[RMDB]
RNA sequence: GGGAACGACUCGAGUAGAGUCGAAAAGGUUACUAGCGGACUCAUACUCCGUUGGGUUGUAGCUCAUUUGGGUAGAGCACUCGUUUUUGGAACGAAUGGUAGCCGGUUCAAAUCCGGUCAACUCAUCUCACAUAUACCGAUUCGUCGGUAUAUGUGAAAAAGAAACAACAACAACAAC
Reactivity to DMS in 0.01 (KOAc 150mM, MgCl2 10mM, bicine 150mM(pH8.5), 24C), signal-to-noise 8, nucleotides 027 to 126: g000g010u010u000a100c060u010a060g020c020g000g000a030c040u000c300a120u030a180c300u010c000c020g020u000u000g010g010g000u000u010g020u000a080g010c010u000c010a090u010u010u020g020g030g010u010a030g000a050g010c000a300c180u000c020g010u000u010u010u040u040g020g020a020a010c030g010a000a040u010g000g000u010a070g010c030c000g000g000u000u010c110a040a300a050u000c010c010g010g000u000c020a020a040c000u000c020a060u020c130
Reactivity to 2A3 in 0.01 (KOAc 150mM, MgCl2 10mM, bicine 150mM(pH8.5), 24C), signal-to-noise 9, nucleotides 027 to 126: g120g020u130u100a060c030u050a040g050c010g010g000a010c000u010c030a060u080a130c000u000c020c000g010u010u010g010g000g000u010u030g030u030a010g010c000u000c020a060u070u080u200g160g020g030u120a020g000a010g010c000a010c010u020c010g020u000u010u020u120u180g210g100a020a010c000g010a030a030u050g040g010u050a010g010c000c000g000g000u000u020c010a020a010a020u000c000c000g000g000u010c010a010a010c010u020c030a070u040c030